[RMDB]
RNA sequence: GGGAACGACUCGAGUAGAGUCGAAAAAGGGAAGGCAUUAUUGAGUGCAGCGUUGAUGAACCUGCCGGCCGGCUAAAUUAAUUAGCAAGAAAGUCUGAAACUGGCUCAAAGGUUCACCAGCACUGCAGUGUAGCACAAAGUUCGCUUUGUGCUACACAAAAGAAACAACAACAACAAC
Reactivity to DMS in 0.01 (KOAc 150mM, MgCl2 10mM, bicine 150mM(pH8.5), 24C), signal-to-noise 4, nucleotides 027 to 126: a050g000g010g020a030a040g000g000c090a100u020u000a100u030u010g000a100g050u000g000c000a010g010c030g020u000u000g010a010u010g000a000a010c000c010u020g030c300c300g010g020c030c030g000g000c020u000a020a050a180u010u050a080a140u000u000a030g010c080a110a070g010a140a070a110g010u020c110u030g000a090a130a140c040u030g010g010c010u000c050a100a180a020g020g010u000u000c000a000c020c000a010g010c000a030c010u010g010c000a040
Reactivity to 2A3 in 0.01 (KOAc 150mM, MgCl2 10mM, bicine 150mM(pH8.5), 24C), signal-to-noise 7, nucleotides 027 to 126: a000g080g000g030a050a020g050g000c060a050u060u100a100u100u270g110a040g080u060g000c000a000g000c010g020u000u010g000a020u000g010a000a000c000c010u010g030c040c010g000g000c000c010g000g000c000u010a030a000a030u110u160a040a090u050u020a020g010c020a080a020g120a250a150a020g110u060c080u110g040a110a060a070c050u070g010g000c010u020c090a080a030a000g000g000u000u000c000a000c000c000a000g000c000a010c010u000g000c000a000